[RMDB]
RNA sequence: GGGAACGACUCGAGUAGAGUCGAAAAAACAAAACAUACCAGUUCUGUGUGGCUUCAGAAGACAUGUUUGUUUGUCUCUCACUGACCCAGCAGGCACCAUCACACAGCUCAGCCUACCAGUUGGUUGCUAGUCAGCCAGAUUCGUCUGGCUGACUAGAAAAGAAACAACAACAACAAC
Reactivity to DMS in 0.01 (KOAc 150mM, MgCl2 10mM, bicine 150mM(pH8.5), 24C), signal-to-noise 1, nucleotides 027 to 126: a000a040c020a040a010a040a050c060a020u000a090c140c130a080g020u000u000c030u000g000u000g020u010g040g020c200u000u010c070a020g000a040a030g010a050c090a030u000g010u000u030u000g010u020u000u010g030u000c080u000c060u000c070a160c060u010g000a110c210c070c020a070g000c080a040g000g020c030a060c050c050a040u000c050a070c060a060c040a040g000c120u000c020a080g000c020c040u000a100c060c040a040g030u000u010g010g010u010u010g000

About this RNA:
The data come from the RNA Mapping Database (RMDB), library OK2TST. This 177-nucleotide RNA was probed chemically with DMS. Values are in units of 0.01, from 0 to 300, in steps of 10. The RNA was probed in 150 mM KOAc, 10 mM MgCl2 and 150 mM bicine (pH 8.5) at 24 C. For DMS the reverse transcriptase was MarathonRT.